This 177-nucleotide RNA was probed chemically with DMS and 2A3. For DMS, 4,347 sequencing reads were counted. Conditions: 150 mM KOAc, 10 mM MgCl2 and 150 mM bicine (pH 8.5), 24 C. Values cover nucleotides 27 to 126. For 2A3, 7,927 sequencing reads were counted.

[RMDB]
RNA sequence: GGGAACGACUCGAGUAGAGUCGAAAAGAAGAGGAGGUGCAGGAAGAGCAACCGGAGGCAGAGGAGGAGAGCCUUAGGUCGCGCAGAGGCCGCAGACUGCUCGUCUCGGGGAGCCAGCGGCAGCUGACAGUUAAGUCAGGUUCGCCUGACUUAACUGAAAAGAAACAACAACAACAAC
Reactivity to DMS in 0.01 (KOAc 150mM, MgCl2 10mM, bicine 150mM(pH8.5), 24C), signal-to-noise 3, nucleotides 027 to 126: g000a090a090g000a090g010g010a050g000g020u000g010c070a060g010g010a070a070g000a100g010c080a090a090c060c040g040g030a060g010g040c070a070g000a100g010g000a050g000g020a070g010a090g010c060c040u000u000a090g010g010u010c070g030c150g010c030a070g010a050g000g010c010c010g020c040a080g000a040c030u010g000c000u000c000g010u010c110u000c080g020g000g010g000a040g020c000c030a020g010c010g010g000c020a020g010c030u000g010a150
Reactivity to 2A3 in 0.01 (KOAc 150mM, MgCl2 10mM, bicine 150mM(pH8.5), 24C), signal-to-noise 3, nucleotides 027 to 126: g060a050a020g020a020g010g010a010g020g010u070g030c030a020g020g050a060a060g040a030g050c010a030a040c010c010g020g030a010g010g000c050a030g000a040g090g030a020g020g000a040g010a010g030c000c010u040u050a050g050g000u050c020g000c010g000c110a000g020a040g090g000c000c000g000c020a000g020a070c020u080g090c000u070c030g180u060c120u090c100g030g000g000g020a000g030c000c000a010g010c000g030g000c010a020g020c010u040g030a050